[RMDB]
RNA sequence: GGGAACGACUCGAGUAGAGUCGAAAAGUGAGCCCAGGCAGAAAACAAGUAGCUCAUGACUUUAGGCAACUCCCAAGAAACCUGCAAAUGUCCCUGAGUUGAAUACGAAACGGUUUUUAUUGAAUGAUGGUACUAUAGACUUCGGUCUAUAGUACCAAAAAGAAACAACAACAACAAC
Reactivity to DMS in 0.01 (KOAc 150mM, MgCl2 10mM, bicine 150mM(pH8.5), 24C), signal-to-noise 2, nucleotides 027 to 126: g000u010g030a100g000c000c050c000a080g010g000c100a040g000a100a070a150a090c110a040a120g010u000a110g030c030u000c060a050u000g000a070c040u010u000u000a060g010g000c080a070a090c080u000c030c030c040a140a120g010a090a050a070c080c020u000g000c070a030a060a090u010g000u000c000c030c060u000g000a110g010u000u010g000a060a130u000a070c120g000a050a050a120c130g040g000u010u010u000u000u000a070u040u020g010a120a090u000g010a100